About this RNA: Structure probing data (2A3 and DMS) for a 177-nucleotide construct. DMS adducts were read by reverse transcription with MarathonRT. Values cover nucleotides 27 to 126. The reactions ran in a buffer of 150 mM KOAc, 10 mM MgCl2 and 150 mM bicine (pH 8.5), at 24 C. The DMS profile rests on 1,597 reads. It was measured as part of the RMDB library VIROID.

RNA sequence: GGGAACGACUCGAGUAGAGUCGAAAAGUGGGGAGUGCCUCGCGGCCGACAGGAGUAAUUCCUGCUGAAACAGGGUUUUCACCCUUCCUUUCUUCAGGUUUCCUUCCUCGCGCCCGCAGGAUCACCCGUCAUAAAGGACGUUCGCGUCCUUUAUGACAAAAGAAACAACAACAACAAC
Reactivity to 2A3 in 0.01 (KOAc 150mM, MgCl2 10mM, bicine 150mM(pH8.5), 24C), signal-to-noise 1, nucleotides 027 to 126: g160u130g010g010g000g030a110g080u190g080c000c010u010c120g020c030g000g000c020c000g020a040c120a120g000g000a010g020u050a010a010u100u040c000c000u020g010c000u020g010a010a010a040c300a160g030g000g000u060u060u220u290c070a050c000c000c000u000u050c000c000u000u020u010c000u030u000c000a000g030g000u000u020u000c000c000u000u030c010c010u040c000g000c020g020c010c010c000g010c000a000g010g000a020u080c050a040c010c000c010
Reactivity to DMS in 0.01 (KOAc 150mM, MgCl2 10mM, bicine 150mM(pH8.5), 24C), signal-to-noise 1, nucleotides 027 to 126: g020u020g010g010g000g000a100g040u010g000c010c000u010c210g030c020g000g010c010c000g000a030c110a000g010g010a020g010u000a020a050u010u010c000c000u000g000c020u000g000a000a010a000c240a020g010g000g000u000u010u000u010c180a090c000c000c010u000u000c030c010u000u000u000c000u000u000c000a020g000g000u000u020u000c000c000u000u000c040c040u000c010g000c150g010c120c000c040g010c020a020g000g000a050u000c070a200c020c010c000